[RMDB]
An RNA of 177 nucleotides, treated with DMS and read out base by base. For DMS the reverse transcriptase was MarathonRT. The RNA was probed in 150 mM KOAc, 10 mM MgCl2 and 150 mM bicine (pH 8.5) at 24 C.
RNA sequence: GGGAACGACUCGAGUAGAGUCGAAAAGAUAUGGACUCAGCCGAUAAGAUGCUAUCGGAAACGAUAGGCAUCUUUUGACGGCUACGCGAGUCCUAAGUCAAAAGAGCCUCACUUCGGUGAGGCUCAACCAAUAAGGGUGCUUCGGCACCCUUAUUGGAAAAGAAACAACAACAACAAC
Reactivity to DMS in 0.01 (KOAc 150mM, MgCl2 10mM, bicine 150mM(pH8.5), 24C), signal-to-noise 2, nucleotides 027 to 126: g000a040u000a300u000g000g000a000c020u000c040a050g000c010c000g040a070u000a060a010g000a020u000g020c000u000a010u000c000g020g010a060a100a110c010g010a010u000a040g010g010c000a000u030c000u000u000u020u000g000a250c060g000g000c010u010a010c270g030c210g020a010g000u010c000c000u000a000a070g010u000c030a070a050a140a150g000a010g030c000c000u000c000a000c000u000u030c200g020g020u010g000a010g000g020c000u000c000a000a010